[RMDB]
RNA sequence: GGGAACGACUCGAGUAGAGUCGAAAAGAUAUGGAUCCCUUGGGAGUCAGUGGCUCGGAAACGAGCCACGCUGACGAAGAACAAGGGAGUCCUAAGUCAAACCCCUCCGCGUUCGCGCGGAGGGGAACCAUGUAUGUACGUUCGCGUACAUACAUGGAAAAGAAACAACAACAACAAC
Reactivity to 2A3 in 0.01 (KOAc 150mM, MgCl2 10mM, bicine 150mM(pH8.5), 24C), signal-to-noise 2, nucleotides 027 to 126: g000a010u010a000u040g000g000a010u000c000c000c000u000u000g020g000g000a010g000u000c030a010g000u010g010g000c000u000c000g000g010a010a000a000c000g000a000g000c020c000a000c010g000c020u070g000a010c000g130a240a010g000a010a000c000a010a000g020g000g000a020g050u040c000c000u000a000a000g010u000c000a010a070a300c000c010c000c010u010c010c020g000c010g040u040u070c300g000c010g000c000g160g000a000g020g000g010g000a010a010
Reactivity to DMS in 0.01 (KOAc 150mM, MgCl2 10mM, bicine 150mM(pH8.5), 24C), signal-to-noise 4, nucleotides 027 to 126: g020a010u010a010u020g000g000a200u000c000c000c010u000u000g010g000g000a020g020u000c000a070g030u000g010g010c000u000c000g040g000a010a000a020c010g020a010g010c000c000a000c010g000c300u010g010a010c000g000a080a130g000a230a200c010a020a010g000g000g020a010g010u010c000c000u010a000a090g000u000c020a100a090a170c000c000c000c000u000c000c000g010c000g010u000u010c210g020c020g030c000g000g000a010g000g000g020g020a000a020